[RMDB]
RNA sequence: GGGAACGACUCGAGUAGAGUCGAAAAGAUAUGGACGAAAUCACCAGACUACCCACCCACAGAACUACAGUUGAUCAUUCGGAAACGAAUGGACUGCUGUGGAGGUCUGGUGAUUUCGUCCUAAGUCGGUAAACUAUUCGUUCGCGAAUAGUUUACCAAAAGAAACAACAACAACAAC
Reactivity to DMS in 0.01 (KOAc 150mM, MgCl2 10mM, bicine 150mM(pH8.5), 24C), signal-to-noise 2, nucleotides 027 to 126: g000a120u010a300u010g000g000a000c000g020a010a010a030u000c000a000c010c000a020g000a020c020u000a080c060c000c200a300c220c010c000a020c020a050g010a030a080c090u020a300c000a010g000u000u010g010a190u010c000a000u000u010c000g000g000a170a100a110c000g010a010a030u000g010g000a000c000u000g010c010u000g010u000g000g000a120g030g010u000c000u000g010g000u000g000a000u000u000u000c010g020u000c020c000u010a000a090g010u040c090